[RMDB]
Chemical mapping of a 177-nucleotide RNA with 2A3. Reactivities are given for positions 27 through 126.
RNA sequence: GGGAACGACUCGAGUAGAGUCGAAAAGUGGCACGAGUGCAGCCACAGGUAGGAGCUCCGGAUUCUACCAGUACUCGAAGGAAUGCGGAGUUCAAAGAACGUAUUCCAACCGGAGAAAAGAACUCAAGGGAUCGUACUACUUCGGUAGUACGAUCCCAAAAGAAACAACAACAACAAC
Reactivity to 2A3 in 0.01 (KOAc 150mM, MgCl2 10mM, bicine 150mM(pH8.5), 24C), signal-to-noise 1, nucleotides 027 to 126: g000u000g010g000c000a020c190g170a170g140u300g000c110a000g000c010c010a000c000a010g060g000u000a000g000g000a040g020c000u000c040c020g010g000a000u000u000c000u000a000c030c010a000g060u090a160c000u010c010g010a140a000g000g020a010a000u000g000c050g000g020a040g000u140u150c000a000a000a000g050a020a000c010g000u030a000u000u000c000c020a000a000c000c000g060g030a000g030a030a090a030a000g120a020a000c010u000c100a010a110